RNA sequence: GGGAACGACUCGAGUAGAGUCGAAAAUCUAACCAAAGAAGGAUUUCAGUGGCAAAAAGUACAAGACAUGAUCAAUAACAGACCAAUCCUUGCCGCAUCACAUAAAUUUGCUAAACAAUAUAGCAAAGUCAAUCGCUCGCUUCGGCGGGCGGUUGGCAAAAGAAACAACAACAACAAC
Reactivity to 2A3 in 0.01 (KOAc 150mM, MgCl2 10mM, bicine 150mM(pH8.5), 24C), signal-to-noise 8, nucleotides 027 to 126: u000c000u030a020a060c020c020a050a050a070g090a060a050g050g010a010u060u130u120c100a040g030u020g030g000c020a020a030a040a080a050g070u080a070c040a070a050g060a040c050a120u130g030a070u090c040a060a090u110a150a040c030a060g050a030c020c020a010a020u030c010c000u020u030g020c000c010g010c020a040u110c050a030c010a050u230a130a140a100u030u030u020g000c000u030a040a120a070c070a240a050u180a030u030a170g010c000a000a010a010
Reactivity to DMS in 0.01 (KOAc 150mM, MgCl2 10mM, bicine 150mM(pH8.5), 24C), signal-to-noise 7, nucleotides 027 to 126: u000c030u010a080a260c070c090a070a110a130g000a100a240g000g000a020u000u000u000c080a050g020u010g000g010c050a030a050a070a070a070g010u000a060c140a070a070g010a070c080a060u010g000a030u000c060a050a080u020a070a100c180a070g000a060c040c030a040a090u000c050c040u000u000g010c040c030g020c070a060u000c090a060c130a070u010a060a060a190u010u000u000g010c010u010a020a070a120c170a080a100u010a080u000a010g000c010a020a030a060

Background: Structure probing data (2A3 and DMS) for a 177-nucleotide construct. For 2A3, 16,591 sequencing reads were counted. The DMS profile rests on 7,001 reads. For 2A3 the reverse transcriptase was SuperScript II with manganese. The reactions ran in a buffer of 150 mM KOAc, 10 mM MgCl2 and 150 mM bicine (pH 8.5), at 24 C. It was measured as part of the RMDB library OK2TST.